An RNA of 177 nucleotides, treated with DMS and 2A3 and read out base by base.
[RMDB]
RNA sequence: GGGAACGACUCGAGUAGAGUCGAAAACACGAAGGUUGGCUAAUCCUGGUCGGACAUCAGGAGGUUAGUGCACUGGCAUAAGCCAACUUGGCGCUAAUAGAUACUAAUCGUAGCAUAGCUGAAUAAAGCUCAUAUAUUAGUUCGCUAAUAUAUGAGCAAAAGAAACAACAACAACAAC
Reactivity to DMS in 0.01 (KOAc 150mM, MgCl2 10mM, bicine 150mM(pH8.5), 24C), signal-to-noise 9, nucleotides 027 to 126: c050a190c130g010a100a090g010g000u000u000g000g010c010u000a080a180u010c010c010u000g000g010u010c180g020g010a300c110a020u000c000a020g000g000a040g020g010u010u000a060g020u000g010c020a200c170u030g010g010c010a080u010a070a060g000c000c000a010a010c060u000u010g010g020c080g010c010u000a020a070u020a090g000a090u020a090c140u030a080a060u010c100g010u000a030g010c040a080u020a050g010c030u010g010a080a100u020a050a080a090
Reactivity to 2A3 in 0.01 (KOAc 150mM, MgCl2 10mM, bicine 150mM(pH8.5), 24C), signal-to-noise 9, nucleotides 027 to 126: c080a000c040g060a090a030g050g000u020u010g020g000c020u040a050a060u000c000c000u010g010g030u050c120g100g090a040c030a040u020c000a010g010g010a010g020g050u090u110a040g010u030g020c040a070c280u130g140g000c020a060u070a170a010g000c000c000a000a010c000u010u040g040g000c020g000c020u020a040a030u070a240g050a030u070a120c050u140a120a100u080c050g050u020a010g010c020a090u080a050g020c040u070g070a110a070u170a140a060a010
Values cover nucleotides 27 to 126.